An RNA of 207 nucleotides, treated with 2A3 and DMS and read out base by base.
For DMS the reverse transcriptase was MarathonRT.
The 2A3 profile rests on 11,072 reads.
RNA sequence: GGGAACGACUCGAGUAGAGUCGAAAAACGAUCGUACGCGACCGAGGCGCGGCUAGGUCGACGGACCGAACAAUGGCAUCCCGCAUUCUGCCAUCCGCCGCGCAGCUUCUUCUCAAACGGUGCGGAAAAAAGUAGGACACCUUCGGGUGUCCUACAAGUUCAGUAUUAUGUUCGCAUAAUACUGAACAAAAGAAACAACAACAACAAC
Reactivity to 2A3 in 0.01 (KOAc 150mM, MgCl2 10mM, bicine 150mM(pH8.5), 24C), signal-to-noise 4, nucleotides 027 to 156: a010c030g010a050u050c030g020u080a040c160g010c040g130a040c020c020g020a070g000g060c000g000c000g000g000c000u010a010g000g030u020c030g140a100c160g130g030a000c000c000g010a000a000c010a020a010u000g000g000c000a030u100c030c020c000g000c010a030u300u090c020u050g000c000c000a010u010c010c030g000c010c000g000c010g000c000a000g000c000u120u070c010u070u010c030u020c040a070a080a050c050g020g000u010g000c000g000g000a060a050a020a030a000a020g000u010a000g000g000a000c000a000c010c000u030u080c200g070g000g000u000g000u000c000c000u000a000c000a000a000
Reactivity to DMS in 0.01 (KOAc 150mM, MgCl2 10mM, bicine 150mM(pH8.5), 24C), signal-to-noise 2, nucleotides 027 to 156: a090c030g000a010u000c030g030u010a080c110g030c040g020a040c020c010g010a120g000g000c010g060c030g010g000c020u000a120g020g000u000c010g030a100c300g030g010a050c000c010g010a140a070c270a170a070u010g000g010c010a080u010c050c010c030g020c020a070u000u000c070u000g000c040c020a060u000c030c060g050c000c010g030c010g010c020a010g010c030u000u000c060u000u000c050u000c060a080a100a090c030g010g030u000g010c020g020g020a010a060a050a130a110a140g000u000a010g010g000a030c000a020c000c000u010u000c260g020g000g020u000g010u000c000c000u000a000c010a010a080